RNA sequence: GGGAACGACUCGAGUAGAGUCGAAAACGCGGCGCAUCCCCCCCAGUGGCGCGUCGAUAAAGGUGCUCACGGACCGCGUACCUUUGUUUUACUCCUAAUGGUCUUAACCCGGAUUCCUCCCCCAGAAGAGUUUGAGAGUAUUCGUACUCUCAAACUCAAAAGAAACAACAACAACAAC
Reactivity to 2A3 in 0.01 (KOAc 150mM, MgCl2 10mM, bicine 150mM(pH8.5), 24C), signal-to-noise 5, nucleotides 027 to 126: c040g000c010g020g000c020g010c020a140u130c010c000c000c000c000c000c010a040g050u090g080g000c040g000c010g050u010c020g000a020u180a040a090a020g020g010u020g010c020u020c040a070c060g070g030a030c020c010g020c020g000u060a060c000c000u040u060u050g080u030u090u030u060a070c040u030c020c000u090a090a110u140g020g000u010c000u020u070a040a050c010c000c000g030g000a020u060u040c000c000u020c000c000c000c010c000a030g030a180a030
Reactivity to DMS in 0.01 (KOAc 150mM, MgCl2 10mM, bicine 150mM(pH8.5), 24C), signal-to-noise 3, nucleotides 027 to 126: c030g010c030g000g000c060g010c050a110u000c020c010c000c030c020c020c030a080g030u020g010g020c100g020c020g000u000c030g000a060u000a030a040a100g010g000u010g010c000u050c030a060c090g020g030a080c030c040g000c120g040u010a110c030c040u000u010u000g020u030u000u010u020a140c090u000c010c050u040a030a080u000g000g010u020c010u010u020a100a080c040c000c020g000g000a130u000u000c000c000u020c010c000c010c030c000a140g020a110a100